[RMDB]
An RNA of 177 nucleotides, treated with 2A3 and DMS and read out base by base. Reactivities are rounded to 0.1 and cut off at 0 and 3. The DMS profile rests on 2,004 reads. Reactivities are given for positions 27 through 126. Source: RMDB library OK2TST, as collected in RNAgym.
RNA sequence: GGGAACGACUCGAGUAGAGUCGAAAAAACUAGGCUCAUCGUUGAGGGUGAACGAGUCUACCAAGCUAAGCAUUUGCUGCUAGUAGGUGUGCAGACAUCAUUUGACGACGGUCUGGAUUUGUUUGCACUCGUCCUAGGUAUUCGUACCUAGGACGAGAAAAGAAACAACAACAACAAC
Reactivity to 2A3 in 0.01 (KOAc 150mM, MgCl2 10mM, bicine 150mM(pH8.5), 24C), signal-to-noise 1, nucleotides 027 to 126: a000a000c050u060a070g010g000c050u060c100a060u100c060g020u010u040g030a000g050g000g020u040g030a110a040c020g020a020g030u000c000u040a040c020c000a100a000g000c010u160a000a120g010c020a090u110u080u300g020c090u050g020c000u000a000g000u010a020g000g050u100g040u100g080c000a010g050a060c010a020u020c020a060u080u000u010g010a000c040g000a010c030g000g000u000c000u020g030g030a080u030u050u110g100u010u060u090g120c020a010
Reactivity to DMS in 0.01 (KOAc 150mM, MgCl2 10mM, bicine 150mM(pH8.5), 24C), signal-to-noise 3, nucleotides 027 to 126: a060a050c060u000a030g010g020c030u010c060a140u000c030g010u000u000g000a090g000g040g010u010g000a090a090c060g010a160g010u010c010u000a030c010c020a120a120g010c020u010a030a060g030c010a230u010u010u010g020c180u010g020c040u010a050g010u000a060g000g000u000g000u000g000c050a070g010a290c000a010u000c030a040u000u000u010g000a000c020g040a070c300g000g000u000c000u020g020g000a110u000u000u000g010u000u020u000g000c110a110